[RMDB]
RNA sequence: GGGAACGACUCGAGUAGAGUCGAAAACAAUGCAGGUUAAGCCAAAGAGAUGUCCCGACCGGAGGCCGACAAUCCAGGGAACCGGAUGUCAUCACGUUGUUGCAGUACCAGAUGGCAUCUUAAAUCCAAAAGAACACAUAGUUCGCUAUGUGUUCAACAUGUAAACAGGGUUCGCCCUGUUUACAUGAAAAGAAACAACAACAACAAC
Reactivity to 2A3 in 0.01 (KOAc 150mM, MgCl2 10mM, bicine 150mM(pH8.5), 24C), signal-to-noise 4, nucleotides 027 to 156: c060a030a130u150g070c030a030g040g050u140u110a070a060g040c010c020a100a070a010g060a000g020a070u060g030u020c000c000c010g020a040c030c000g030g020a030g010g050c010c000g030a030c040a070a070u050c030c030a020g020g000g040a050a060c030c060g000g000a000u010g010u020c000a010u010c010a000c160g000u060u040g010u030u020g020c070a070g070u130a090c020c030a020g000a020u000g000g010c010a000u000c000u000u040a060a060a020u050c020c010a040a060a010a070g010a000a000c000a000c000a000u010a000g000u050u040c140g010c090u000a000u000g000u000g000u000u000c000a000a000
Reactivity to DMS in 0.01 (KOAc 150mM, MgCl2 10mM, bicine 150mM(pH8.5), 24C), signal-to-noise 3, nucleotides 027 to 156: c080a100a100u010g040c080a070g040g000u000u000a100a090g010c020c040a050a150a140g010a080g010a090u000g000u000c000c030c010g000a190c040c030g000g010a150g030g030c030c000g040a080c030a060a090u010c030c060a070g010g020g010a080a100c060c100g040g010a020u000g020u000c000a050u000c030a230c170g000u000u010g000u000u000g000c010a080g000u000a120c040c030a110g030a030u000g010g000c000a020u000c020u000u030a030a060a100u010c040c030a040a080a110a130g030a030a010c000a010c010a010u000a020g010u000u010c300g020c010u000a000u010g010u000g010u000u000c000a030a070
The record gives the reactivity of an RNA of 207 nucleotides to 2A3 and DMS. The data come from the RNA Mapping Database (RMDB), library M2RFPK. For 2A3, 3,509 sequencing reads were counted. 2A3 adducts were read by reverse transcription with SuperScript II with manganese. Conditions: 150 mM KOAc, 10 mM MgCl2 and 150 mM bicine (pH 8.5), 24 C. Reactivities are given for positions 27 through 156.